Overview:
Structure probing data (2A3 and DMS) for a 177-nucleotide construct. For DMS, 21,983 sequencing reads were counted.

RNA sequence: GGGAACGACUCGAGUAGAGUCGAAAACCCUUAGCAUUCGUGCUAAGGGAAAUAUCGGUCGGCUCAUGCAGCUAGUCGAAAAUGCUGCUCGACCUUUUGGUAAAAUCUGGCCGUUCGCGGCCAGAAACAUCUAAACAUCAUUCGUGAUGUUUAGAUGAAAAGAAACAACAACAACAAC
Reactivity to 2A3 in 0.01 (KOAc 150mM, MgCl2 10mM, bicine 150mM(pH8.5), 24C), signal-to-noise 8, nucleotides 027 to 126: c000c000c000u000u000a010g000c010a020u020u050c210g100u050g000c000u000a000a010g010g000g040a020a120a000u210a020u030c050g010g000u000c000g020g010c060u070c280a050u230g000c010a000g000c010u060a030g190u150c090g060a060a030a020a040u140g000c010u000g000c030u020c010g000a010c000c000u010u080u030u050g030g020u100a020a020a020a140u020c000u000g000g000c020c010g020u020u030c260g010c010g060g000c000c000a000g000a000a000a000
Reactivity to DMS in 0.01 (KOAc 150mM, MgCl2 10mM, bicine 150mM(pH8.5), 24C), signal-to-noise 9, nucleotides 027 to 126: c000c000c000u000u000a000g010c000a030u000u010c190g020u000g010c000u000a010a010g000g000g000a010a020a050u010a040u000c100g010g000u000c010g010g010c150u010c170a080u010g010c000a010g010c010u000a190g010u010c200g000a070a100a080a090u010g000c000u000g000c010u000c010g010a020c000c000u000u000u000u000g010g020u000a060a070a090a100u000c000u000g000g010c000c000g020u000u010c190g020c020g000g000c000c000a000g000a010a060a120